[RMDB]
RNA sequence: GGGAACGACUCGAGUAGAGUCGAAAAGCUGUGCCUCCCGUGCAUGGGUGUCCAUCAGGUAGGGUCCAUCAGGUAGGGGUGAGGGAAGGUGGGCCUCACUGGCUCAGGCGGUCCCUGCGCACUGCAGCGUAUGGGCGAUAUUCGUAUCGCCCAUACGAAAAGAAACAACAACAACAAC
Reactivity to 2A3 in 0.01 (KOAc 150mM, MgCl2 10mM, bicine 150mM(pH8.5), 24C), signal-to-noise 3, nucleotides 027 to 126: g020c020u030g020u060g020c010c010u010c000c010c010g020u060g020c020a080u080g050g050g000u090g070u000c030c010a080u050c060a090g100g040u120a040g040g030g020u000c030c000a030u030c040a040g100g060u140a040g010g060g000g050u130g050a060g050g020g010a040a070g040g050u080g000g030g000c020c010u020c020a070c050u070g060g000c020u020c050a010g070g040c060g060g020u040c010c000c010u020g040c020g020c000a070c080u090g020c030a020g020
Reactivity to DMS in 0.01 (KOAc 150mM, MgCl2 10mM, bicine 150mM(pH8.5), 24C), signal-to-noise 4, nucleotides 027 to 126: g030c030u010g020u000g010c040c060u000c020c010c040g000u000g020c140a040u010g010g000g020u010g000u000c040c030a090u010c100a090g000g010u000a080g020g010g010u010c050c010a040u000c060a100g030g010u010a100g000g000g020g020u010g010a090g010g000g010a070a100g000g020u000g010g000g010c020c000u010c150a060c110u000g020g010c050u020c030a080g010g030c020g020g000u000c020c020c010u000g010c040g010c030a080c050u000g000c040a120g010